[RMDB]
RNA sequence: GGGAACGACUCGAGUAGAGUCGAAAAAGGUCGUUCGCGACCUGGACGGCGUACUACGAACCGCGAGCGGUACGAUAAGCGUACUCCCAAAUAGGAGUACGCUUUUGACGUACCCUCGAACUACGGUUCGUAUCGCAUAGCGAGCGUUCGCGCUCAAAUGGACAUAAUGGUUCGCCAUUAUGUCCAUAAAAGAAACAACAACAACAAC
Reactivity to DMS in 0.01 (KOAc 150mM, MgCl2 10mM, bicine 150mM(pH8.5), 24C), signal-to-noise 2, nucleotides 027 to 156: a020g010g010u000c020g000u000u000c200g030c000g020a040c000c000u000g000g020a250c040g020g010c000g050u000a070c110u000a020c000g010a000a020c010c000g010c010g010a040g030c050g070g000u020a000c000g020a210u000a020a030g020c000g030u000a000c000u010c000c000c030a030a180a210u010a050g000g000a040g010u010a000c010g000c010u000u000u000u000g010a200c070g020u000a000c000c000c010u000c020g010a060a270c010u000a030c000g000g010u000u000c020g030u010a000u000c030g030c030a130u000a110g040c080g010a040g000c040g000u010u000c050g040c000g000c000u000c030a040a130
Reactivity to 2A3 in 0.01 (KOAc 150mM, MgCl2 10mM, bicine 150mM(pH8.5), 24C), signal-to-noise 2, nucleotides 027 to 156: a020g060g000u040c070g000u050u110c210g020c020g130a000c000c020u030g000g060a060c080g100g000c000g040u130a110c060u040a000c030g020a000a000c000c010g010c010g020a000g000c080g020g000u010a000c030g040a090u040a060a000g010c000g000u000a000c000u030c010c030c030a120a150a100u300a120g040g000a000g000u000a000c020g000c040u020u000u000u030g040a000c020g020u010a000c000c000c000u000c000g000a010a020c110u120a040c000g000g000u010u010c000g000u030a000u060c010g000c010a030u150a040g160c160g020a020g010c010g000u090u090c210g010c020g030c220u050c060a000a100
Annotation
The record gives the reactivity of an RNA of 207 nucleotides to DMS and 2A3. For DMS, 6,207 sequencing reads were counted. The 2A3 profile rests on 1,716 reads. Conditions: 150 mM KOAc, 10 mM MgCl2 and 150 mM bicine (pH 8.5), 24 C. Reactivities are given for positions 27 through 156.